[RMDB]
RNA sequence: GGGAACGACUCGAGUAGAGUCGAAAACGUAUCUGCGCGGGGGGACACUCUUCUGCCCGCCUCGUAGCGACAACCUUGGCCGAUGUCAGACCCGCAUGGGAAUGUUCGGCCAUGACCAGACAACUGCCAACCACCCCAUGUUCGCAUGGGGUGGUUGAAAAGAAACAACAACAACAAC
Reactivity to DMS in 0.01 (KOAc 150mM, MgCl2 10mM, bicine 150mM(pH8.5), 24C), signal-to-noise 1, nucleotides 027 to 126: c110g000u030a060u010c030u000g030c010g000c170g040g000g040g020g020g000a040c030a040c230u030c180u020u030c130u020g020c010c010c020g020c020c000u010c000g020u000a000g030c060g040a020c050a140a070c110c000u000u000g010g030c000c010g030a020u000g040u020c010a020g000a300c000c000c000g020c300a090u000g020g000g000a040a200u000g020u000u000c000g030g000c010c000a000u000g030a170c010c020a060g020a080c140a050a070c050u000g010c110
Reactivity to 2A3 in 0.01 (KOAc 150mM, MgCl2 10mM, bicine 150mM(pH8.5), 24C), signal-to-noise 1, nucleotides 027 to 126: c040g000u030a040u090c020u030g050c030g000c030g000g000g010g050g050g060a020c000a050c120u270c000u300u060c030u120g000c000c010c020g300c060c000u020c020g000u000a050g020c020g040a040c020a010a020c000c000u010u000g000g010c000c020g000a030u120g210u280c000a010g010a050c000c030c000g180c250a280u300g000g000g000a000a030u010g010u050u000c000g010g000c010c000a000u000g020a000c030c050a000g040a050c040a100a010c070u040g080c000